Structure probing data (2A3) for a 207-nucleotide construct.
RNA sequence: GGGAACGACUCGAGUAGAGUCGAAAAGUGGCACAGAGGAAACACUAAAUAUGCUUCUUCAGCUCCUUAUCAAGGUUAGGCCUCCACAAAGGGUGGAGCAGGGAAGAGAAGGCCUCACCGGGCAGACCUAUCUUGGAGAAGAUACAAGCAAUGGUGCGGCAUUUUUAUUCUUCGGAAUAAAAAUGCCAAAAGAAACAACAACAACAAC
Reactivity to 2A3 in 0.01 (KOAc 150mM, MgCl2 10mM, bicine 150mM(pH8.5), 24C), signal-to-noise 1, nucleotides 027 to 156: g040u010g010g010c070a000c030a010g030a030g030g010a020a050a030c020a010c090u150a010a030a070u250a080u030g010c000u010u030c120u060u030c010a010g020c060u160c020c000u030u140a120u300c030a030a080g030g020u010u000a020g010g000c010c000u000c010c000a060c130a040a110a030g120g050g000u010g020g010a090g000c030a050g030g020g020a030a030g000a010g000a090a050g000g030c020c000u000c010a030c010c050g050g030g010c030a010g000a050c000c010u060a060u300c010u010u070g020g010a080g010a060a000g010a020u120a010c040a000a050g110c000a000a080u300g010g000u010g020c090
The data come from the RNA Mapping Database (RMDB), library OK3TST. 2A3 adducts were read by reverse transcription with SuperScript II with manganese. For 2A3, 493 sequencing reads were counted. The RNA was probed in 150 mM KOAc, 10 mM MgCl2 and 150 mM bicine (pH 8.5) at 24 C.